Notes:
Chemical mapping of a 177-nucleotide RNA with DMS and 2A3.

[RMDB]
RNA sequence: GGGAACGACUCGAGUAGAGUCGAAAAUCGAAAUCACCGUGAUGUGCCGCUGGGUCGACAGGCCGUUGGUGGUCAUCGAAUUGUUCGCCCAGCGCAGCGUGGCCUCGGUUUUGUCGACGACGAGCACCUCCCUAGUACGGUUCGCCGUACUAGGGAGAAAAGAAACAACAACAACAAC
Reactivity to DMS in 0.01 (KOAc 150mM, MgCl2 10mM, bicine 150mM(pH8.5), 24C), signal-to-noise 2, nucleotides 027 to 126: u010c020g000a030a070a050u040c080a090c070c070g020u010g030a100u020g030u020g010c070c090g000c020u000g000g000g020u040c060g040a010c020a090g010g000c140c020g010u010u010g010g040u000g000g030u000c000a120u020c110g000a080a300u050u030g000u000u010c200g000c060c000c000a040g030c010g000c020a030g000c020g030u020g000g000c160c020u000c050g010g020u000u000u060u020g040u000c020g000a030c040g050a050c000g000a080g030c060a100c090
Reactivity to 2A3 in 0.01 (KOAc 150mM, MgCl2 10mM, bicine 150mM(pH8.5), 24C), signal-to-noise 7, nucleotides 027 to 126: u030c010g010a020a010a060u120c030a030c030c020g060u080g040a190u120g080u140g110c100c060g020c010u030g030g030g050u180c060g010a010c020a040g000g040c010c020g080u170u280g150g110u240g020g010u050c010a070u060c030g030a090a140u130u070g050u080u070c020g000c010c010c000a020g000c000g000c010a010g000c000g030u020g020g010c000c010u020c010g020g040u010u020u060u070g150u060c000g000a010c000g010a010c010g000a020g000c020a040c000